Chemical mapping of a 207-nucleotide RNA with 2A3 and DMS. Source: RMDB library OK3TST, as collected in RNAgym. DMS adducts were read by reverse transcription with MarathonRT. For 2A3, 995 sequencing reads were counted.
RNA sequence: GGGAACGACUCGAGUAGAGUCGAAAAUGCGGUAAAUGGCAGAGUGCUUGAUGAAGAUGAUGAGCUUUCAUUCUGUCUGCGCGAUGGCGACGUGGUCAACGUUUAUUGCCAGCCGUCCGGCGCAAUUGGCGACCUUAUCGGUGCGAUACUGAAACCAACGUUGAUUCAACUUCGGUUGAAUCAACGUAAAAGAAACAACAACAACAAC
Reactivity to 2A3 in 0.01 (KOAc 150mM, MgCl2 10mM, bicine 150mM(pH8.5), 24C), signal-to-noise 2, nucleotides 027 to 156: u120g010c050g000g000u130a090a120a060u130g050g000c040a040g030a040g030u020g000c090u060u050g050a080u100g120a120a090g060a100u240g030a080u110g020a100g070c000u080u080u070c030a070u030u000c000u000g030u000c010u050g010c000g000c010g030a100u090g000g000c010g020a070c050g040u040g040g050u070c030a080a000c030g020u000u060u190a170u040u080g000c040c000a030g030c030c010g050u050c060c040g000g000c010g000c000a010a170u110u070g090g010c010g010a110c010c010u110u110a120u120c030g020g000u050g080c000g000a040u050a120c020u040g010a180a090a000c030c010a060
Reactivity to DMS in 0.01 (KOAc 150mM, MgCl2 10mM, bicine 150mM(pH8.5), 24C), signal-to-noise 1, nucleotides 027 to 156: u010g030c090g010g000u060a020a140a110u000g000g010c010a010g020a030g040u000g010c030u010u000g000a140u030g000a130a270g040a130u000g000a210u010g010a140g000c000u010u000u000c100a080u000u000c000u000g000u000c000u000g030c110g100c020g000a110u010g000g060c050g010a110c050g000u000g010g050u010c080a090a050c070g030u000u000u000a030u000u000g060c000c010a250g000c010c000g050u020c090c150g060g020c060g050c000a050a140u000u010g020g050c030g050a160c030c000u000u040a130u020c090g020g040u000g020c130g000a130u000a090c130u020g030a060a150a200c000c040a090